Conditions: 150 mM KOAc, 10 mM MgCl2 and 150 mM bicine (pH 8.5), 24 C. Chemical mapping of a 177-nucleotide RNA with DMS. It was measured as part of the RMDB library OK2TST.
[RMDB]
RNA sequence: GGGAACGACUCGAGUAGAGUCGAAAAAUGGCGUUUUCUAUCAAAUUCACCAGUGAUAGCUACUAGGGAACAAUCUUCAUACAUUAAACUGUGCAUGAAAACGGUUCGAUGAAGAUUAGCUGUUCGAGACCCACUUCUUGUUCGCAAGAAGUGGGUCAAAAGAAACAACAACAACAAC
Reactivity to DMS in 0.01 (KOAc 150mM, MgCl2 10mM, bicine 150mM(pH8.5), 24C), signal-to-noise 1, nucleotides 027 to 126: a030u000g030g000c040g020u000u020u000u010c030u000a140u000c070a030a040a090u030u000c100a050c050c120a120g010u010g030a000u000a020g010c120u000a040c080u010a120g040g010g000a070a020c060a080a020u000c040u000u000c000a040u000a150c060a070u000u000a180a060a050c030u000g000u000g020c110a180u020g050a170a090a080a030c110g000g000u000u000c190g000a010u020g020a010a010g000a020u020u000a050g030c080u000g060u000u010c090g020a280